[RMDB]
RNA sequence: GGGAACGACUCGAGUAGAGUCGAAAAUCCACGUCCUUCGGGACGUGGAAAAUACGGCACGGGAGCCGAAGAAAUCCCGAAGCGCACUGCAGCGCAGCACAAAAAGGUGAGUCUUCGGACUCACCAACCCACAAUAUUCGUUCGCGAAUAUUGUGGGAAAAGAAACAACAACAACAAC
Reactivity to 2A3 in 0.01 (KOAc 150mM, MgCl2 10mM, bicine 150mM(pH8.5), 24C), signal-to-noise 2, nucleotides 027 to 126: u000c000c000a000c000g000u010c020c010u050u100c170g060g000g000a000c000g000u000g000g010a000a000a030a000u070a000c010g010g020c020a010c020g030g040g030a040g020c000c040g020a020a030g160a010a030a000u010c000c000c000g010a130a020g000c050g000c000a080c130u300g030c080a100g000c040g000c000a030g120c040a040c050a050a100a010a050a000g030g000u000g000a000g000u010c000u040u080c290g150g010a000c000u000c000a000c000c000a000a000
Reactivity to DMS in 0.01 (KOAc 150mM, MgCl2 10mM, bicine 150mM(pH8.5), 24C), signal-to-noise 1, nucleotides 027 to 126: u000c000c000a000c000g100u000c000c000u010u020c150g040g000g030a040c010g020u000g010g000a010a000a020a040u010a200c060g020g050c020a140c040g000g000g000a130g000c000c000g030a240a060g000a060a030a080u040c010c000c000g000a140a190g010c000g000c010a120c180u000g060c100a150g010c000g020c040a160g010c280a040c210a140a060a060a040a100g000g000u000g030a020g000u000c000u000u010c230g030g000a010c000u000c000a000c000c000a000a000